RNA sequence: GGGAACGACUCGAGUAGAGUCGAAAACAGCGGUUCGAUUCCGCUCAGCUCCAUUCUCCCUUCGGGGCUGCAAUGGUUUCGACGGGGCAUAAGGAGGGUGACUGAAGCCUGCUCGGUAAGAGCAAAUGAGGUCGUGUUUAUUCGUAAACACGACCUCAAAAGAAACAACAACAACAAC
Reactivity to 2A3 in 0.01 (KOAc 150mM, MgCl2 10mM, bicine 150mM(pH8.5), 24C), signal-to-noise 1, nucleotides 027 to 126: c120a000g070c040g090g000u030u020c030g040a000u030u090c000c000g070c000u000c000a000g000c000u030c030c000a030u130u040c030u010c020c020c010u030u040c040g000g000g030g010c000u010g000c010a060a090u140g020g000u020u000u050c000g000a000c030g000g000g010g000c020a160u060a190a080g020g010a090g000g020g000u030g030a080c010u210g000a000a000g000c000c000u010g000c000u000c030g040g060u300a110a030g000a000g010c000a010a010a010u090